[RMDB]
RNA sequence: GGGAACGACUCGAGUAGAGUCGAAAAUCUUACCACCAUGAAUGUUAUUGAUUUUUUCUUAGGUAAAAAGUCUAGUGUAGUAGUAAAUGAAUUUGAAGUUGCUGAAUGGUGGAAUAAUUCUGUUAGUAUGGUUUUGUGUGAUGCAAAACCAGAAGGCCUAAUGGGAAAGUUUCGACUUUCCCAUUAGAAAAGAAACAACAACAACAAC
Reactivity to DMS in 0.01 (KOAc 150mM, MgCl2 10mM, bicine 150mM(pH8.5), 24C), signal-to-noise 3, nucleotides 027 to 156: u000c030u000u000a120c010c010a050c010c010a070u000g010a170a150u010g000u010u010a050u000u010g010a000u000u000u000u000u000u000c030u010u010a160g010g010u010a010a030a040a060a060g020u000c020u000a100g020u000g020u000a110g030u000a100g010u000a050a090a080u000g020a100a110u000u000u000g010a070a260g030u010u000g010c020u010g010a090a040u000g000g030u010g020g010a060a040u000a060a100u000u000c010u010g020u000u000a120g010u000a110u000g020g020u000u000u000u010g000u010g040u020g030a230u000g020c000a000a000a010a020c000c000a000g010a100a300g030g000c170
Reactivity to 2A3 in 0.01 (KOAc 150mM, MgCl2 10mM, bicine 150mM(pH8.5), 24C), signal-to-noise 2, nucleotides 027 to 156: u060c010u010u090a040c010c010a020c000c000a000u060g070a080a010u060g110u220u220a190u190u130g040a070u050u010u070u040u020u060c080u070u070a120g000g120u100a050a170a030a000a000g010u020c020u010a060g060u030g000u140a060g010u020a010g030u030a090a170a110u160g110a030a030u240u080u000g050a120a020g020u060u060g020c000u020g020a020a000u010g000g000u010g010g010a000a000u060a010a030u050u020c040u070g060u010u000a030g000u000a030u000g000g000u000u040u000u000g010u000g130u110g090a070u260g000c000a000a010a040a040c000c000a000g000a000a020g300g010c030